Record summary:
Structure probing data (2A3) for a 207-nucleotide construct. It was measured as part of the RMDB library M2RFPK. Reactivities are given for positions 27 through 156. The RNA was probed in 150 mM KOAc, 10 mM MgCl2 and 150 mM bicine (pH 8.5) at 24 C. The 2A3 profile rests on 658 reads.
[RMDB]
RNA sequence: GGGAACGACUCGAGUAGAGUCGAAAAUAGCGAAGUAGGAUUUUAUGCGUCAAGUGUUCACAGGCUGGGGAGUCGCCGUGAAACGAAAAGCAGAAAGCGUGCUGCUUACGAUAUAAUUUCCGCUCCCAUAAGAAGUCUCUGUUCGCAGAGACUUCAAGUGUCCCAGAAAGUUCGCUUUCUGGGACACAAAAGAAACAACAACAACAAC
Reactivity to 2A3 in 0.01 (KOAc 150mM, MgCl2 10mM, bicine 150mM(pH8.5), 24C), signal-to-noise 1, nucleotides 027 to 156: u180a030g060c010g050a120a010g010u090a010g000g020a020u030u000u010u000a010u030g000c000g010u010c020a080a020g020u000g030u050u010c000a030c110a150g040g030c010u130g000g000g050g000a000g020u080c110g020c010c000g010u000g030a030a000a080c030g010a010a030a030a010g000c000a000g080a100a070a020g160c160g080u130g100c020u000g050c000u000u000a030c050g010a020u000a000u000a030a010u010u010u010c000c010g000c030u010c000c000c000a040u100a030a020g010a000a010g000u000c000u000c000u000g060u070u070c240g000c040a000g000a000g000a000c010u010u000c000a000a000